[RMDB]
This 207-nucleotide RNA was probed chemically with DMS and 2A3. The data come from the RNA Mapping Database (RMDB), library OK3TST. The reactions ran in a buffer of 150 mM KOAc, 10 mM MgCl2 and 150 mM bicine (pH 8.5), at 24 C. For DMS the reverse transcriptase was MarathonRT.
RNA sequence: GGGAACGACUCGAGUAGAGUCGAAAAUUUGGGUGGCCACGCAGACGGUCGGCCAACUCCAUCUCGGCGUAAUAGGCGCUCAUGCUUUCGGCAUCGUUGAGGUUCAACGUUCCGUAGACAUGGCGGUUAUAGAAUUGCGUGGUGCCUAGGCAAGGCAUAUUUAUGGGUGGUUCGCCACCCAUAAAUAAAAAGAAACAACAACAACAAC
Reactivity to DMS in 0.01 (KOAc 150mM, MgCl2 10mM, bicine 150mM(pH8.5), 24C), signal-to-noise 1, nucleotides 027 to 156: u000u000u000g000g040g040u010g010g000c000c030a040c020g020c040a140g000a180c080g010g000u020c040g020g020c050c020a060a080c070u000c050c060a100u000c050u000c000g050g030c050g020u000a130a080u000a020g010g010c010g000c020u010c000a030u000g010c000u000u000u000c020g000g000c070a040u000c010g040u000u000g000a180g030g020u010u000c010a030a040c000g000u010u000c000c020g010u010a020g010a010c010a030u000g000g030c020g020g030u000u010a070u000a100g020a120a160u010u000g020c010g060u000g000g010u000g030c000c020u020a060g020g000c040a150a070g020g030c050a230
Reactivity to 2A3 in 0.01 (KOAc 150mM, MgCl2 10mM, bicine 150mM(pH8.5), 24C), signal-to-noise 3, nucleotides 027 to 156: u140u120u060g000g000g010u040g150g000c000c000a020c020g010c000a030g030a090c060g130g020u090c050g000g010c010c000a020a060c030u060c040c030a180u050c070u030c060g050g000c010g000u050a040a050u020a050g110g030c010g020c020u120c100a010u010g020c040u020u140u160c020g040g000c160a060u030c040g010u000u000g040a100g180g240u230u120c010a000a000c020g010u010u020c020c010g000u010a040g060a140c000a000u000g000g010c000g030g080u030u040a080u000a050g190a190a130u160u040g000c000g000u010g020g000u000g000c000c000u020a030g000g080c080a040a070g040g020c040a020